[RMDB]
The data come from the RNA Mapping Database (RMDB), library OK2TST.
Structure probing data (DMS) for a 177-nucleotide construct.
The reactions ran in a buffer of 150 mM KOAc, 10 mM MgCl2 and 150 mM bicine (pH 8.5), at 24 C.
RNA sequence: GGGAACGACUCGAGUAGAGUCGAAAAACGUGGGAAAGGUGAAAACUGGAACUUACUUCAUUCCCCCAUAUGAUGAGAAACAACAACCGUUAGGGGUGCAACUUAGUCCUAAUGGAUGCCUGCACUGUGCUAGCGCAUUAUUCGUAAUGCGCUAGCAAAAAGAAACAACAACAACAAC
Reactivity to DMS in 0.01 (KOAc 150mM, MgCl2 10mM, bicine 150mM(pH8.5), 24C), signal-to-noise 2, nucleotides 027 to 126: a100c140g040u000g000g000g010a080a300a140g010g010u020g000a060a070a110a090c030u000g000g010a260a180c040u000u000a050c080u000u000c070a250u000u000c020c040c000c110c070a100u000a090u020g000a060u010g000a060g000a060a040a070c040a060a090c070a080a050c030c010g000u000u000a020g000g010g000g000u000g010c130a040a040c220u000u000a100g000u000c010c050u000a060a010u010g000g040a050u000g000c190c070u010g010c090a050c130u000g030